[RMDB]
RNA sequence: GGGAACGACUCGAGUAGAGUCGAAAAGAUAUGGAACGGAACUACAGCUAAGCAAGCGUUGAAAAAUCUGGUAUAUCGGAAACGAUAUACCAGAUUUGGAGCUUGAACGCGCUGCCGUUCCUAAGUCCGAUCACUUGUACUUCGGUACAAGUGAUCGAAAAGAAACAACAACAACAAC
Reactivity to DMS in 0.01 (KOAc 150mM, MgCl2 10mM, bicine 150mM(pH8.5), 24C), signal-to-noise 1, nucleotides 027 to 126: g010a070u010a300u080g000g020a000a010c000g000g010a140a040c070u040a300c010a000g000c000u020a250a190g000c000a000a030g000c000g000u000u010g000a110a090a000a000a020u000c000u020g040g020u000a020u000a000u000c000g000g000a140a080a210c030g030a060u000a000u000a000c000c000a010g010a000u010u000u000g030g000a200g000c000u000u000g000a040a040c250g030c300g040c010u000g010c000c000g000u010u000c000c000u000a000a020g000u000c080
Source: RMDB library TTRINS, as collected in RNAgym.
This 177-nucleotide RNA was probed chemically with DMS.
The reactions ran in a buffer of 150 mM KOAc, 10 mM MgCl2 and 150 mM bicine (pH 8.5), at 24 C.
For DMS, 784 sequencing reads were counted.
Reactivities are rounded to 0.1 and cut off at 0 and 3.
For DMS the reverse transcriptase was MarathonRT.